RNA sequence: GGGAACGACUCGAGUAGAGUCGAAAAGAUAGAGACGCGAGUUGGCUAUCGGUAAUUUUCGCACUUGCCUCAAAUAAACAUCUGAACUGGAGUCACUACCCAGAAACACCGAGAUGGUGUAGUGAUGAAUUCUCUUCCUUUUCGAAGGAAGAGAAUUAAAAGAAACAACAACAACAAC
Reactivity to 2A3 in 0.01 (KOAc 150mM, MgCl2 10mM, bicine 150mM(pH8.5), 24C), signal-to-noise 9, nucleotides 027 to 126: g040a010u120a020g050a010g020a030c070g010c050g010a050g060u090u080g180g020c040u050a060u080c000g000g020u090a120a130u060u090u090u130c080g000c020a020c020u020u040g010c000c010u040c020a040a120a090u230a060a150a020c050a120u050c060u100g090a100a060c050u090g030g030a060g010u010c000a000c020u050a030c010c000c000a000g070a030a100a000c070a050c030c090g040a040g030a130u140g010g010u110g010u050a010g000u010g020a040u050g020
Reactivity to DMS in 0.01 (KOAc 150mM, MgCl2 10mM, bicine 150mM(pH8.5), 24C), signal-to-noise 6, nucleotides 027 to 126: g000a040u020a080g030a300g000a070c090g010c140g010a060g010u000u010g030g020c040u000a030u000c040g010g030u050a070a130u010u010u020u030c070g010c090a030c030u000u000g000c060c050u010c040a050a060a100u030a090a090a080c170a040u010c050u000g010a140a120c040u020g020g020a120g000u010c010a040c040u010a080c020c000c010a040g000a090a100a070c060a060c040c050g000a090g020a120u010g000g000u020g010u000a030g000u000g000a030u000g010
Conditions: 150 mM KOAc, 10 mM MgCl2 and 150 mM bicine (pH 8.5), 24 C. An RNA of 177 nucleotides, treated with 2A3 and DMS and read out base by base. For DMS, 11,259 sequencing reads were counted.